[RMDB]
RNA sequence: GGGAACGACUCGAGUAGAGUCGAAAAAUUACUGCACCUUAUGUAGUUCUCACUGGCUUAGGUGAGUCCUUUAAGAAAGUUGCAACCAUACCGUAUAAGGUUUGCAACUCUGUUAAGGAUACUCUGGCCUGGUGUUAUUGUUCGCAAUAACACCAGGAAAAGAAACAACAACAACAAC
Reactivity to DMS in 0.01 (KOAc 150mM, MgCl2 10mM, bicine 150mM(pH8.5), 24C), signal-to-noise 2, nucleotides 027 to 126: a070u000u020a050c010u000g010c040a080c210c100u000u000a140u010g000u000a040g020u000u000c010u000c040a150c130u010g000g030c090u010u000a050g020g000u010g010a220g020u000c020c000u000u000u000a030a020g000a010a010a030g010u010u000g000c000a010a010c040c000a090u050a090c220c190g000u000a300u020a120a080g000g000u000u000u000g000c010a000a010c010u000c010u020g010u020u010a000a010g010g000a040u000a040c060u000c020u000g010g030
Reactivity to 2A3 in 0.01 (KOAc 150mM, MgCl2 10mM, bicine 150mM(pH8.5), 24C), signal-to-noise 2, nucleotides 027 to 126: a000u040u070a040c030u010g000c030a020c010c070u130u090a070u110g020u030a050g030u080u000c010u010c020a050c060u040g070g000c060u110u210a020g020g030u020g020a020g050u020c010c010u020u060u090a050a000g050a060a110a000g010u010u010g000c000a000a020c000c030a040u090a120c000c080g110u170a070u030a300a060g000g000u000u080u100g010c000a000a000c000u000c010u030g070u030u020a000a020g020g010a010u020a110c000u010c020u030g050g020